[RMDB]
RNA sequence: GGGAACGACUCGAGUAGAGUCGAAAAAGGGUUCGACGGGGGAGCGAAGGGCCGAAAGUAGCGAGGCGAGGACCCCAUCUUACCUCGUUAAAAAUGGUGGGAAAAGAUAACUGCCAACGAAAACUACGCUUUAGCUGCUUAAUAACGCAGCUACGUCGGUAUAGUCCCAGUUCGCUGGGACUAUACCAAAAGAAACAACAACAACAAC
Reactivity to 2A3 in 0.01 (KOAc 150mM, MgCl2 10mM, bicine 150mM(pH8.5), 24C), signal-to-noise 1, nucleotides 027 to 156: a000g010g000g000u020u110c030g010a010c010g120g000g000g000g000a020g010c060g000a060a090g000g000g050c030c050g070a050a050a010g020u050a020g050c020g010a000g000g090c000g010a000g010g000a020c000c000c000c000a000u000c000u020u040a000c000c000u000c000g140u030u050a040a010a000a000a000u270g000g000u030g000g080g000a000a120a000a000g040a000u090a000a150c050u110g090c060c080a050a010c090g090a020a020a020a020c110u150a040c020g010c030u190u000u000a000g020c020u040g010c000u040u080a030a170u110a300a020c070g020c020a000g000c020u030a010c040g020u040c010
This 207-nucleotide RNA was probed chemically with 2A3. For 2A3, 581 sequencing reads were counted. It was measured as part of the RMDB library RSTRND.